[RMDB]
Chemical mapping of a 207-nucleotide RNA with 2A3. The RNA was probed in 150 mM KOAc, 10 mM MgCl2 and 150 mM bicine (pH 8.5) at 24 C. The data come from the RNA Mapping Database (RMDB), library M2RFPK.
RNA sequence: GGGAACGACUCGAGUAGAGUCGAAAAGAAAGAAAGAAAGACACGAGAGCAGCGAUGACCCGCCGGGCGAUCUGUGGUCGCCAUGUGCCCGGCGUCGAGCAGUGGCGCGCCCGGGCCGUCAGAUCAAAAAACGCCCACUACUUCGGUAGUGGGCGAAGUGUAGUUAAAUGUUCGCAUUUAACUACACAAAAGAAACAACAACAACAAC
Reactivity to 2A3 in 0.01 (KOAc 150mM, MgCl2 10mM, bicine 150mM(pH8.5), 24C), signal-to-noise 1, nucleotides 027 to 156: g060a000a060a000g030a020a060a000g010a020a100a010g080a000c040a010c080g000a050g000a000g090c040a000g020c000g040a070u100g030a040c010c000c000g030c060c070g020g000g000c010g000a010u040c090u190g100u050g070g010u070c000g050c020c020a010u110g050u110g010c000c000c020g000g000c030g020u070c010g030a020g030c020a010g030u060g020g030c010g000c010g030c120c100c020g000g020g000c000c000g010u030c050a000g020a090u140c100a020a040a030a030a000a100c020g000c000c000c000a000c010u000a000c000u000u010c050g110g000u000a000g000u010g000g020g000c010g010a000a000